[RMDB]
RNA sequence: GGGAACGACUCGAGUAGAGUCGAAAAUGGGCUACCAGUAAGCGAAAAAUGAUACAGGACGAGAAAAACAUAAUUCGAGAUUUUUCAGGAUGGAUUUUUUUAGGUAUCUAUCAAAACUAUUCUGAUGCAACGUAGAGCACGUUCGCGUGCUCUACAAGGAUUAAUACAGCUUCGGCUGUAUUAAUCCAAAAGAAACAACAACAACAAC
Reactivity to DMS in 0.01 (KOAc 150mM, MgCl2 10mM, bicine 150mM(pH8.5), 24C), signal-to-noise 1, nucleotides 027 to 156: u000g050g040g020c010u010a110c030c040a070g010u010a110a130g000c040g010a020a060a100a080a120u000g010a100u020a110c000a130g000g000a120c060g000a180g020a040a080a080a060a070c020a050u010a060a130u000u000c020g010a170g000a200u000u000u000u020u000c000a030g000g000a040u000g000g000a020u000u000u000u000u000u000u000a010g000g000u000a050u000c030u040a060u010c030a000a020a010a020c000u000a080u020u010c020u010g010a040u000g030c140a060a060c120g000u020a020g000a030g010c000a020c000g040u010u010c300g020c030g020u010g010c000u000c000u000a010c010a030a130
Reactivity to 2A3 in 0.01 (KOAc 150mM, MgCl2 10mM, bicine 150mM(pH8.5), 24C), signal-to-noise 3, nucleotides 027 to 156: u050g010g000g020c030u050a070c020c010a020g060u080a030a050g030c020g070a020a030a020a060a040u090g030a030u050a100c050a080g050g030a010c040g010a000g040a060a040a030a020a000c040a030u140a110a080u160u050c020g020a020g040a190u100u160u100u050u030c010a010g010g010a000u000g020g000a040u020u000u010u020u030u020u050a030g050g020u150a090u170c010u000a010u010c020a000a000a000a020c000u010a010u030u000c010u020g010a020u050g070c060a060a020c090g010u000a000g000a000g000c000a000c000g010u030u040c100g010c000g070u000g000c000u000c000u000a000c000a000a000
Structure probing data (DMS and 2A3) for a 207-nucleotide construct. The 2A3 profile rests on 2,598 reads. Conditions: 150 mM KOAc, 10 mM MgCl2 and 150 mM bicine (pH 8.5), 24 C. For DMS the reverse transcriptase was MarathonRT.